The record gives the reactivity of an RNA of 177 nucleotides to 2A3 and DMS. The DMS profile rests on 2,232 reads. Reactivities are rounded to 0.1 and cut off at 0 and 3. The RNA was probed in 150 mM KOAc, 10 mM MgCl2 and 150 mM bicine (pH 8.5) at 24 C. The data come from the RNA Mapping Database (RMDB), library OK1LIB. The 2A3 profile rests on 3,769 reads.
[RMDB]
RNA sequence: GGGAACGACUCGAGUAGAGUCGAAAACGGUGAGCCGGACCUAUGCCGCGCCCGGCGCGGCCGAGUGCCGUUGAGCGGGUUGGCGAAGCGUCAUGUCCACAGUGAGCAGAUCGGUGCGGGUCCGCCAGAUCCCUUUUACGUUCGCGUAAAAGGGAUCAAAAGAAACAACAACAACAAC
Reactivity to 2A3 in 0.01 (KOAc 150mM, MgCl2 10mM, bicine 150mM(pH8.5), 24C), signal-to-noise 5, nucleotides 027 to 126: c060g050g010u080g080a040g100c050c000g030g030a020c010c000u050a060u230g040c010c020g140c050g050c050c020c000g240g120c000g000c010g020g010c010c000g190a140g030u300g020c000c000g020u100u290g030a050g110c010g000g000g000u060u080g060g000c020g020a140a050g040c010g130u040c030a050u080g060u050c050c020a110c000a170g050u050g100a020g030c020a030g020a230u190c090g000g040u040g070c050g010g000g030u030c020c000g030c020c010a010
Reactivity to DMS in 0.01 (KOAc 150mM, MgCl2 10mM, bicine 150mM(pH8.5), 24C), signal-to-noise 1, nucleotides 027 to 126: c280g000g000u000g000a210g040c080c090g000g000a040c000c000u000a160u070g000c000c000g060c300g000c050c020c010g000g000c080g000c010g030g010c030c040g000a040g050u000g000c000c000g080u020u050g050a030g060c020g010g030g000u000u050g010g030c040g000a280a090g000c000g020u010c020a000u020g020u030c000c030a060c080a200g000u000g020a050g000c010a220g050a110u010c040g000g000u000g050c030g030g000g010u010c010c050g000c080c010a120